[RMDB]
RNA sequence: GGGAACGACUCGAGUAGAGUCGAAAAAUCGAUUACGCGUAUAAUAUUAAUCGUAAUCGCGAUCGGCUACGUAUACGAUGCAUAUCGAUAUAUUAGCGCUAGCCGUACGUAAUGCAUCGAUGCAUCGGCAAUAGUCACGCUUCGGCGUGACUAUUGCAAAAGAAACAACAACAACAAC
Reactivity to 2A3 in 0.01 (KOAc 150mM, MgCl2 10mM, bicine 150mM(pH8.5), 24C), signal-to-noise 2, nucleotides 027 to 126: a000u020c000g000a000u010u040a020c020g030c060g110u120a020u000a300a200u240a090u220u220a020a060u090c010g000u020a000a010u010c000g000c020g030a050u080c010g010g000c020u060a020c010g040u090a100u030a190c020g010a000u000g040c070a040u040a020u230c020g000a010u060a000u020a030u120u220a050g000c020g030c080u040a020g000c000c000g020u040a030c020g000u060a060a050u120g090c080a010u030c040g040a030u020g000c000a010u010c000g030
Reactivity to DMS in 0.01 (KOAc 150mM, MgCl2 10mM, bicine 150mM(pH8.5), 24C), signal-to-noise 1, nucleotides 027 to 126: a100u010c000g010a000u000u000a000c020g000c220g020u000a020u030a060a110u000a280u000u000a150a080u000c000g010u000a020a020u000c010g020c110g010a200u000c010g000g000c030u010a010c050g010u000a170u000a090c020g010a000u000g000c040a060u000a120u000c010g030a080u000a080u000a080u000u000a100g030c020g000c220u000a040g000c080c010g040u000a060c030g010u000a060a040u000g010c140a030u000c010g020a030u000g000c030a010u000c080g000